[RMDB]
RNA sequence: GGGAACGACUCGAGUAGAGUCGAAAAAAAGAACAAAAAAUGACAUAGCUCAUCUAAUGGGAAGGAGAGAAGAAGGAGCAACCAUGGGAUUCUCAAUGGACAUUGAUCUGCGGCCAGCCUCCGCCUGGUCGCUUAGGUUGUUCGCAACCUAAGCGACAAAAGAAACAACAACAACAAC
Reactivity to 2A3 in 0.01 (KOAc 150mM, MgCl2 10mM, bicine 150mM(pH8.5), 24C), signal-to-noise 4, nucleotides 027 to 126: a000a010a000g220a050a050c170a070a050a010a030a000a040u160g030a010c030a090u260a050g010c030u000c050a090u030c050u080a080a030u170g050g000g060a010a040g040g020a030g010a000g020a130a010g020a040a010g030g010a040g000c030a060a000c030c000a020u070g050g020g050a060u130u010c080u020c000a030a020u070g010g020a020c040a130u040u110g050a060u060c050u050g030c000g020g010c020c000a020g020c030c050u050c010c010g010c040c030u020g040
Reactivity to DMS in 0.01 (KOAc 150mM, MgCl2 10mM, bicine 150mM(pH8.5), 24C), signal-to-noise 4, nucleotides 027 to 126: a010a070a060g030a100a090c100a050a040a080a050a060a040u020g020a030c050a160u050a110g000c080u010c020a030u010c050u000a110a060u030g000g000g000a060a030g000g000a080g020a050g000a030a020g000a120a050g010g020a090g010c120a030a030c060c040a020u000g000g000g000a090u010u010c080u000c010a070a110u020g020g000a070c080a060u010u010g000a050u020c050u000g010c090g000g000c030c020a040g010c050c020u010c060c050g020c080c040u010g000

Overview:
This 177-nucleotide RNA was probed chemically with 2A3 and DMS. For 2A3 the reverse transcriptase was SuperScript II with manganese. It was measured as part of the RMDB library OK1LIB. For DMS the reverse transcriptase was MarathonRT. The DMS profile rests on 5,188 reads. For 2A3, 2,343 sequencing reads were counted.